[RMDB]
RNA sequence: GGGAACGACUCGAGUAGAGUCGAAAACCUCAAGGAAGCCAAAGACACCAUCACAAUCAGGCAGCCAGGAGCCAGGGCUUCCAUAGGCCCAGCUCUGUACCUGUAGGGGGAUGGAAUCUGCUAAAAGAAAGAUAAGCUUGUUCGCAAGCUUAUCUUUAAAAGAAACAACAACAACAAC
Reactivity to 2A3 in 0.01 (KOAc 150mM, MgCl2 10mM, bicine 150mM(pH8.5), 24C), signal-to-noise 4, nucleotides 027 to 126: c010c010u070c050a080a130g140g020a080a000g040c060c070a170a110a000g060a020c020a030c040c000a000u010c000a010c020a070a130u120c010a010g020g030c060a010g090c080c080a080g040g050a010g020c020c030a130g010g000g000c000u120u040c100c010a040u110a010g000g000c000c020c000a020g000c000u000c010u040g020u030a010c000c000u030g010u050a040g020g150g040g000g000a010u000g000g000a010a050u010c030u070g010c030u110a120a000a000a050g130
Reactivity to DMS in 0.01 (KOAc 150mM, MgCl2 10mM, bicine 150mM(pH8.5), 24C), signal-to-noise 9, nucleotides 027 to 126: c020c000u020c200a100a110g000g010a090a060g020c050c210a080a110a060g010a060c200a200c000c000a010u000c020a040c030a120a110u010c010a020g000g000c140a090g030c160c180a100g010g000a010g020c000c050a120g000g000g020c000u010u010c220c220a110u040a060g010g000c000c010c020a300g000c000u000c010u000g010u010a080c030c010u000g020u010a090g010g020g010g000g000a010u000g000g000a090a110u010c020u000g000c060u010a050a080a090a080g010

Conditions: 150 mM KOAc, 10 mM MgCl2 and 150 mM bicine (pH 8.5), 24 C. Structure probing data (2A3 and DMS) for a 177-nucleotide construct. The data come from the RNA Mapping Database (RMDB), libraries RFM100 and RFMREP. Values are in units of 0.01, from 0 to 300, in steps of 10. For 2A3 the reverse transcriptase was SuperScript II with manganese.